[RMDB]
RNA sequence: GGGAACGACUCGAGUAGAGUCGAAAAUUCUGUUUUCGUCUCAAGCUCUUCAUUACUACAGCGCAAGUCUACCAUUACCACACCCACACACAGAUAUUACGGCUAAUGUUUAUUAGUCAAGUUUCCACUCAUACUUACUCUUCGGAGUAAGUAUGAGAAAAGAAACAACAACAACAAC
Reactivity to 2A3 in 0.01 (KOAc 150mM, MgCl2 10mM, bicine 150mM(pH8.5), 24C), signal-to-noise 4, nucleotides 027 to 126: u040u000c050u100g070u030u020u010u050c010g020u000c000u010c020a060a110g020c000u020c010u110u100c040a060u050u130a070c040u040a050c010a040g000c010g000c080a080a030g030u000c010u020a040c020c000a040u020u100a040c020c010a030c010a010c030c020c000a030c000a000c000a000c020a040g080a080u110a050u170u190a060c090g000g000c000u010a010a010u040g110u290u280u170a070u020u000a010g010u000c020a020a040g000u000u020u000c010c000a020
Reactivity to DMS in 0.01 (KOAc 150mM, MgCl2 10mM, bicine 150mM(pH8.5), 24C), signal-to-noise 3, nucleotides 027 to 126: u000u020c180u000g050u000u000u000u010c020g010u000c020u010c040a100a090g010c030u000c010u000u000c070a050u010u010a070c080u000a060c090a070g010c060g000c060a040a040g010u000c040u010a050c030c040a080u010u000a070c030c040a050c080a080c040c010c020a060c070a050c090a070c130a020g010a070u000a050u020u000a100c160g030g000c010u000a010a020u010g010u000u020u010a030u010u000a010g010u010c020a070a120g020u000u010u000c010c100a260